An RNA of 177 nucleotides, treated with DMS and 2A3 and read out base by base. 2A3 adducts were read by reverse transcription with SuperScript II with manganese. The RNA was probed in 150 mM KOAc, 10 mM MgCl2 and 150 mM bicine (pH 8.5) at 24 C. DMS adducts were read by reverse transcription with MarathonRT. The 2A3 profile rests on 1,663 reads.
[RMDB]
RNA sequence: GGGAACGACUCGAGUAGAGUCGAAAAGCCGACCAGGACGACGAGCACGGGAACAUCGAGCCGAAGGAUGACCCGACGUACAUCGCCGGUCGCCUGAUGGACAUCGAGGCGGCGAUAUACCGCGGGCACUAGGGCCCGAAUUCGUUCGGGCCCUAGUAAAAGAAACAACAACAACAAC
Reactivity to DMS in 0.01 (KOAc 150mM, MgCl2 10mM, bicine 150mM(pH8.5), 24C), signal-to-noise 3, nucleotides 027 to 126: g020c010c010g010a060c110c050a120g020g010a080c080g010a060c080g000a100g000c060a070c030g010g000g000a080a090c080a070u010c050g010a100g010c040c020g020a100a090g000g000a090u000g010a130c020c010c000g000a090c100g010u000a030c080a040u000c000g010c030c010g000g000u010c030g000c040c030u010g010a070u010g010g000a080c150a090u000c020g020a110g000g010c010g010g010c010g000a030u000a050u000a050c040c100g020c050g000g020g010c120
Reactivity to 2A3 in 0.01 (KOAc 150mM, MgCl2 10mM, bicine 150mM(pH8.5), 24C), signal-to-noise 2, nucleotides 027 to 126: g050c000c000g020a070c000c030a060g040g040a030c020g010a020c020g010a050g030c040a050c100g020g010g030a160a030c020a070u060c030g030a050g120c040c030g040a060a010g140g040a050u040g070a140c030c000c020g030a020c010g000u030a010c020a050u020c010g010c020c020g060g090u130c020g010c020c020u020g020a040u080g020g150a070c050a120u060c040g020a000g060g030c010g000g000c000g000a010u020a000u010a080c020c070g030c010g030g010g000c000